[RMDB]
RNA sequence: GGGAACGACUCGAGUAGAGUCGAAAAGGGUUCGUCCAUGAGGAUCACCGGUGGAUCGGCCGCAAGAGCCCGGGCCACCCCCACCCGCUGGGCCUCUCCCCCUGAGAGCUGGUGUGGCAUCUUCCGGACUUGAUUGCAAAUUCGUUUGCAAUCAAGUAAAAGAAACAACAACAACAAC
Reactivity to 2A3 in 0.01 (KOAc 150mM, MgCl2 10mM, bicine 150mM(pH8.5), 24C), signal-to-noise 2, nucleotides 027 to 126: g090g000g020u070u070c020g020u000c050c050a090u120g040a080g070g010a050u090c030a030c090c020g000g010u010g000g020a070u050c090g070g010c010c010g020c040a050a050g050a040g110c010c020c050g010g020g000c040c020a130c020c000c000c020c000a010c010c030c000g060c120u090g000g010g040c010c010u010c010u000c000c000c000c020c020u060g060a100g000a000g080c060u080g010g050u030g020u050g040g020c010a010u010c030u080u000c000c000g000g010
Reactivity to DMS in 0.01 (KOAc 150mM, MgCl2 10mM, bicine 150mM(pH8.5), 24C), signal-to-noise 4, nucleotides 027 to 126: g010g000g010u000u000c060g000u000c030c050a120u010g010a100g020g020a100u000c100a130c070c060g010g010u010g000g010a050u010c100g010g020c020c030g020c090a090a160g010a140g010c050c030c030g030g000g010c010c030a220c030c030c030c010c040a270c030c020c020g000c110u010g010g010g010c060c010u000c040u000c020c030c050c030c050u010g000a140g000a090g000c040u010g000g020u000g020u010g010g010c050a080u000c050u000u010c020c040g030g000